[RMDB]
RNA sequence: GGGAACGACUCGAGUAGAGUCGAAAAGGUGACUGCAGUAGCAGUUGCAGCACAAGGCGCAGCAGCAGCAGCUAAGGACAAAGUCGCCACUGCAGCUGCAAGUGCGGCAGCAGCAGCAAAGUCGAAAUAAAUAGUCGACGUUCGCGUCGACUAUUUAAAAAGAAACAACAACAACAAC
Reactivity to DMS in 0.01 (KOAc 150mM, MgCl2 10mM, bicine 150mM(pH8.5), 24C), signal-to-noise 3, nucleotides 027 to 126: g040g000u000g000a050c000u000g000c070a280g030u010a110g030c000a040g040u020u000g000c090a050g030c000a020c030a050a160g000g030c060g030c070a150g000c050a060g020c020a030g060c060a110g000c010u080a120a130g000g030a220c230a150a110a160g030u020c100g020c000c040a250c020u000g000c010a010g020c010u030g000c010a060a040g010u040g000c080g000g030c000a000g000c000a070g030c040a230g000c030a050a170a080g000u000c000g010a110a060a120
Reactivity to 2A3 in 0.01 (KOAc 150mM, MgCl2 10mM, bicine 150mM(pH8.5), 24C), signal-to-noise 2, nucleotides 027 to 126: g200g020u050g040a070c020u010g000c010a060g030u150a040g090c000a000g000u000u000g000c000a010g000c010a000c100a170a040g130g000c090g020c010a080g040c000a010g000c020a000g000c010a000g020c070u040a090a170g010g010a050c050a040a180a040g050u130c060g040c000c000a000c010u000g000c010a030g050c000u000g000c000a050a000g040u010g000c010g010g030c000a000g000c010a000g000c000a020g030c000a110a170a030g060u080c040g080a020a110a000
Source: RMDB library OK1LIB, as collected in RNAgym. This 177-nucleotide RNA was probed chemically with DMS and 2A3. For 2A3 the reverse transcriptase was SuperScript II with manganese. The RNA was probed in 150 mM KOAc, 10 mM MgCl2 and 150 mM bicine (pH 8.5) at 24 C. Reactivities are rounded to 0.1 and cut off at 0 and 3.